RNA sequence: GGGAACGACUCGAGUAGAGUCGAAAAGCGGUUGGUCCUGCGCUCCAUCUCCGAGCGCGCGGCGGUCGACCGCAUCAGCGAGAGCUUUGGCCGCAGCGCACAGGUCAUGCACGACCCCUUUGGGGGGCGUGCGACGUGAGUUCGCUCACGUCGCACGAAAAGAAACAACAACAACAAC
Reactivity to DMS in 0.01 (KOAc 150mM, MgCl2 10mM, bicine 150mM(pH8.5), 24C), signal-to-noise 4, nucleotides 027 to 126: g020c020g010g010u000u000g010g010u000c010c010u000g000c020g010c010u000c020c080a140u010c100u010c140c120g010a060g010c110g020c000g010c090g010g010c110g020g000u000c020g010a030c020c010g010c010a030u000c120a090g010c040g000a140g000a150g010c050u000u000u000g010g010c020c010g000c070a060g010c040g010c040a080c070a100g010g000u000c030a060u000g010c060a070c080g010a110c020c000c000c020u000u000u000g020g000g000g000g020g010
Reactivity to 2A3 in 0.01 (KOAc 150mM, MgCl2 10mM, bicine 150mM(pH8.5), 24C), signal-to-noise 5, nucleotides 027 to 126: g020c010g020g020u020u030g020g020u040c000c030u040g010c000g010c010u010c020c020a220u140c080u050c110c070g040a030g020c030g010c010g000c030g100g000c090g000g010u020c010g020a020c010c000g000c000a040u060c030a020g040c020g040a090g010a010g120c010u100u110u110g040g000c020c010g020c050a030g040c040g000c030a040c020a050g010g040u040c010a040u080g030c040a030c070g120a100c010c040c050c000u100u190u220g110g000g000g010g000g000